[RMDB]
Chemical mapping of a 177-nucleotide RNA with DMS and 2A3.
For 2A3, 792 sequencing reads were counted.
RNA sequence: GGGAACGACUCGAGUAGAGUCGAAAAUUUAAGAGCGUAGAUGUCUCUGUCACGAUACGAGUAAGUGAGUCUCGUGUACUACUGACGAAUGAGACAGAGACAUUUAUGCUCAGUGUCAGUCAAGGAAUCCAAUCCUUUUCUUCGGAAAAGGAUUGGAAAAAGAAACAACAACAACAAC
Reactivity to DMS in 0.01 (KOAc 150mM, MgCl2 10mM, bicine 150mM(pH8.5), 24C), signal-to-noise 2, nucleotides 027 to 126: u000u030u000a120a130g000a000g020c000g040u000a030g010a010u000g000u000c000u000c000u000g000u000c000a130c090g010a130u000a020c040g010a140g080u000a070a080g030u000g020a130g000u000c050u000c160g030u000g000u010a010c030u010a080c050u010g020a100c080g000a100a080u000g000a130g000a040c010a010g000a020g010a000c000a010u000u030u000a030u000g000c000u000c000a020g000u010g020u000c100a030g000u000c090a030a090g010g000a060a140
Reactivity to 2A3 in 0.01 (KOAc 150mM, MgCl2 10mM, bicine 150mM(pH8.5), 24C), signal-to-noise 1, nucleotides 027 to 126: u180u170u100a150a000g000a000g020c000g000u000a010g010a000u020g010u010c010u000c000u020g020u050c000a010c130g020a050u010a120c030g010a010g130u050a100a120g120u090g300a040g060u040c010u010c070g060u040g070u080a130c010u020a010c020u050g200a070c000g120a090a120u180g000a020g000a040c000a000g000a000g000a010c000a000u030u000u000a000u010g000c010u000c010a000g000u010g000u000c000a000g030u010c020a060a080g040g050a080a070